RNA sequence: GGGAACGACUCGAGUAGAGUCGAAAAGGCCUCCACGCCCAGGGCCUCGGCGUUCGACUCCAGGCCGAAGGCGUCGAACCGUCGGAGCAGCGCCGAGCGGGCCACGCCGUGCUGCUCGGCCAGGUCAGUACUGAUACUACUUCGGUAGUAUCAGUACAAAAGAAACAACAACAACAAC
Reactivity to 2A3 in 0.01 (KOAc 150mM, MgCl2 10mM, bicine 150mM(pH8.5), 24C), signal-to-noise 4, nucleotides 027 to 126: g010g010c010c010u000c040c030a060c050g050c020c010c020a020g020g030g000c010c010u020c040g000g000c000g020u040u100c040g050a040c010u010c030c020a050g080g050c040c020g050a060a070g020g000c010g010u020c010g010a030a020c080c030g040u030c010g050g010a020g000c040a010g020c020g000c050c050g010a010g000c030g000g040g030c080c010a070c060g150c070c060g040u100g080c010u000g000c000u000c000g010g000c020c010a010g000g010u040c040a020
Reactivity to DMS in 0.01 (KOAc 150mM, MgCl2 10mM, bicine 150mM(pH8.5), 24C), signal-to-noise 7, nucleotides 027 to 126: g010g010c010c010u000c060c060a120c110g020c010c010c040a160g020g000g010c020c010u000c040g020g010c020g010u000u000c040g000a060c020u000c010c020a100g010g020c060c060g010a130a100g010g010c070g010u000c040g000a030a060c080c070g020u000c020g000g010a040g010c020a070g010c080g010c030c040g000a070g020c000g010g000g010c090c090a070c090g010c070c070g030u000g010c020u000g000c010u000c000g000g010c030c050a060g010g010u010c050a180
Structure probing data (2A3 and DMS) for a 177-nucleotide construct. Reactivities are given for positions 27 through 126. The reactions ran in a buffer of 150 mM KOAc, 10 mM MgCl2 and 150 mM bicine (pH 8.5), at 24 C. For DMS, 12,202 sequencing reads were counted. The data come from the RNA Mapping Database (RMDB), library OK2TRN. For 2A3 the reverse transcriptase was SuperScript II with manganese.